[RMDB]
RNA sequence: GGGAACGACUCGAGUAGAGUCGAAAACCCUAAUCUUCGGAUUAGGGAAAAAGAUAUGGAGAUGAAUCAAGACGAUAAGCUUGUGUCGGAAACGACAUCAAAGCUUUUGACGUCUUGACAUCUCCUAAGUCAAAAAAGGUGAGGUUCGCCUCACCAAUCCUAUUAGCUCCUUCGGGAGCUAAUAGGAAAAAGAAACAACAACAACAAC
Reactivity to 2A3 in 0.01 (KOAc 150mM, MgCl2 10mM, bicine 150mM(pH8.5), 24C), signal-to-noise 3, nucleotides 027 to 156: c000c000c010u000a010a010u000c000u010u100c300g120g000a010u000u000a000g010g000g300a050a040a010a010a030g030a010u040a010u120g010g010a000g000a000u000g030a060a150u010c000a000a000g000a000c060g000a040u030a130a000g000c000u000u010g000u000g000u000c010g010g000a010a060a020c020g040a000c000a000u140c120a080a050a000g000c000u010u010u010u040g030a020c030g000u010c010u000u000g000a000c000a000u000c000u000c000c000u000a000a010g000u000c010a000a000a000a140a010a050g090g020u140g030a000g000g300u040u300c300g060c050c300u300c000a000c300c030a000a040